This 177-nucleotide RNA was probed chemically with DMS and 2A3. 2A3 is a SHAPE reagent: it acylates the 2'-hydroxyl of flexible nucleotides of all four kinds. The data come from the RNA Mapping Database (RMDB), libraries RFM100 and RFMREP. The reactions ran in a buffer of 150 mM KOAc, 10 mM MgCl2 and 150 mM bicine (pH 8.5), at 24 C.

RNA sequence: GGGAACGACUCGAGUAGAGUCGAAAAGCAUGAAAGCUAAGGCGUAACGCUAUGCUAACCUGCAGCGAAUUACAUCGACUGAUAUUAAUAUAAAAAUAGAUGUACACGUUCAACGACUAGCGAGUGAUAGACGAUUGUAUUUCGAUACAAUCGUCUAAAAAGAAACAACAACAACAAC
Reactivity to DMS in 0.01 (KOAc 150mM, MgCl2 10mM, bicine 150mM(pH8.5), 24C), signal-to-noise 6, nucleotides 027 to 126: g020c040a030u000g010a050a170a040g010c010u020a060a190g000g010c000g010u010a070a110c100g010c020u020a300u020g000c000u010a050a250c080c050u000g010c020a130g000c070g010a080a100u010u010a020c020a020u010c000g030a090c300u010g000a190u020a060u010u010a070a100u020a090u020a040a020a040a020a040u010a190g000a020u000g000u000a010c300a100c050g000u000u000c070a050a140c050g000a020c030u000a040g010c010g000a030g010u010g010a170
Reactivity to 2A3 in 0.01 (KOAc 150mM, MgCl2 10mM, bicine 150mM(pH8.5), 24C), signal-to-noise 8, nucleotides 027 to 126: g010c020a030u070g090a130a060a010g000c010u060a080a080g080g000c040g050u120a150a040c100g020c010u020a020u090g000c000u020a030a040c000c030u040g010c020a010g010c010g030a050a050u090u010a030c010a020u010c010g070a060c070u060g070a040u040a040u220u220a120a140u190a050u150a120a080a020a020a030u130a020g020a010u010g010u030a020c060a000c080g050u070u110c060a090a030c020g040a030c020u030a020g050c010g060a020g040u040g050a060